Structure probing data (DMS and 2A3) for a 177-nucleotide construct. Conditions: 150 mM KOAc, 10 mM MgCl2 and 150 mM bicine (pH 8.5), 24 C. It was measured as part of the RMDB library OK2TST.

RNA sequence: GGGAACGACUCGAGUAGAGUCGAAAAAAAAGGAGCGUGGACCUACUUCUAAGUUACAUGAAUACGUUGAGCAUGCUCCCAACUCGUAUGCUUCAACACACUCUACAGAGAGUGAGAAUUAUCCUCACACUAUGGCUCAGUUCGCUGAGCCAUAGUGAAAAGAAACAACAACAACAAC
Reactivity to DMS in 0.01 (KOAc 150mM, MgCl2 10mM, bicine 150mM(pH8.5), 24C), signal-to-noise 2, nucleotides 027 to 126: a020a010a120a070g010g010a110g000c030g040u010g050g000a050c070c040u010a100c120u030u000c050u000a010a050g030u000u010a110c230a060u020g020a110a050u020a060c230g020u000u000g000a010g000c050a010u000g000c020u030c020c040c070a060a120c110u010c090g000u000a010u000g010c000u000u000c050a000a040c020a200c060a030c000u000c000u000a060c240a060g010a100g000a040g010u000g000a100g020a160a090u000u000a060u000c030c000u000c140a150
Reactivity to 2A3 in 0.01 (KOAc 150mM, MgCl2 10mM, bicine 150mM(pH8.5), 24C), signal-to-noise 1, nucleotides 027 to 126: a000a000a000a040g130g020a090g040c090g000u050g030g000a010c010c010u010a080c050u020u090c040u080a050a020g060u000u090a070c030a110u060g130a070a050u170a060c130g000u000u000g000a010g070c000a010u000g020c010u060c050c000c000a020a020c000u070c020g010u010a000u030g030c000u140u110c000a010a020c000a000c000a010c020u010c000u080a090c080a050g180a000g000a000g090u050g020a010g040a050a050u120u090a030u100c000c000u080c010a020

The DMS profile rests on 1,079 reads.